[RMDB]
RNA sequence: GGGAACGACUCGAGUAGAGUCGAAAAGAUAUGGACUGAGACAUGUCCAGCGAGUCGGAAACGACUCGGGACAACAGCUCAGGUCCUAAGUCAAACUGCGUCCUUAGGUUCGCCUAAGGACGCAGAACCUAGUGGUUCUGUUCGCAGAACCACUAGGAAAAGAAACAACAACAACAAC
Reactivity to 2A3 in 0.01 (KOAc 150mM, MgCl2 10mM, bicine 150mM(pH8.5), 24C), signal-to-noise 2, nucleotides 027 to 126: g030a020u070a060u150g010g000a000c010u010g030a010g030a040c080a190u080g000u010c000c010a010g240c010g000a000g000u010c020g010g000a040a060a060c020g000a010c000u000c010g000g000g000a010c020a130a030c060a070g020c000u010c020a010g090g260u090c000c010u050a140a030g080u020c060a060a110a150c010u000g000c000g000u010c000c000u000u020a020g030g010u060u060c280g110c060c000u000a000a000g000g000a010c000g000c010a000g010a000a000
Reactivity to DMS in 0.01 (KOAc 150mM, MgCl2 10mM, bicine 150mM(pH8.5), 24C), signal-to-noise 3, nucleotides 027 to 126: g000a040u000a300u020g000g010a210c000u000g000a020g000a070c050a190u000g010u000c010c000a070g010c050g010a010g010u000c000g030g000a080a080a150c000g020a010c000u000c020g000g010g000a010c010a030a070c270a150g010c000u000c010a010g000g000u000c010c000u000a030a130g000u000c030a110a100a220c010u000g010c010g000u010c010c000u000u000a020g000g020u000u010c220g000c000c000u000a010a020g000g010a010c010g020c000a000g010a030a090
Background: The data come from the RNA Mapping Database (RMDB), library TTRDEL. This 177-nucleotide RNA was probed chemically with 2A3 and DMS. Values cover nucleotides 27 to 126. Values are in units of 0.01, from 0 to 300, in steps of 10.